[RMDB]
RNA sequence: GGGAACGACUCGAGUAGAGUCGAAAAGAUAUGGAAUGAACUACAGGCUAAGUGGCGUUGAAAUCGGAAACGAUGGAGCCACGAUGCCUGCAUUCCUAAGUCAAAGCGUUACGUUCGCGUAACGCAAGAGGAAGUCGUAGUUCGCUACGACUUCCUCAAAAGAAACAACAACAACAAC
Reactivity to DMS in 0.01 (KOAc 150mM, MgCl2 10mM, bicine 150mM(pH8.5), 24C), signal-to-noise 2, nucleotides 027 to 126: g030a020u000a300u000g000g000a020a010u020g010a040a030c060u010a300c000a060g000g010c010u010a290a280g000u000g010g000c000g050u000u030g020a120a130a020u000c000g000g000a090a040a210c000g000a000u000g000g010a120g040c000c000a000c010g000a130u010g010c010c000u010g010c000a010u000u000c000c000u030a040a070g010u010c030a100a120a170g000c000g000u000u000a000c000g050u000u030c190g010c000g030u000a010a000c000g070c010a000a000
Reactivity to 2A3 in 0.01 (KOAc 150mM, MgCl2 10mM, bicine 150mM(pH8.5), 24C), signal-to-noise 2, nucleotides 027 to 126: g010a010u110a060u180g000g040a020a000u020g000a090a030c030u130a060c300a020g000g000c000u080a190a020g010u000g020g000c080g260u300u060g050a030a040a000u010c000g000g020a050a030a040c000g010a000u000g010g050a010g000c020c000a000c010g000a000u010g000c000c010u000g000c000a000u010u000c010c000u010a130a020g020u020c110a090a180a000g000c000g010u000u000a000c010g010u000u110c300g000c020g100u020a000a000c030g020c030a010a000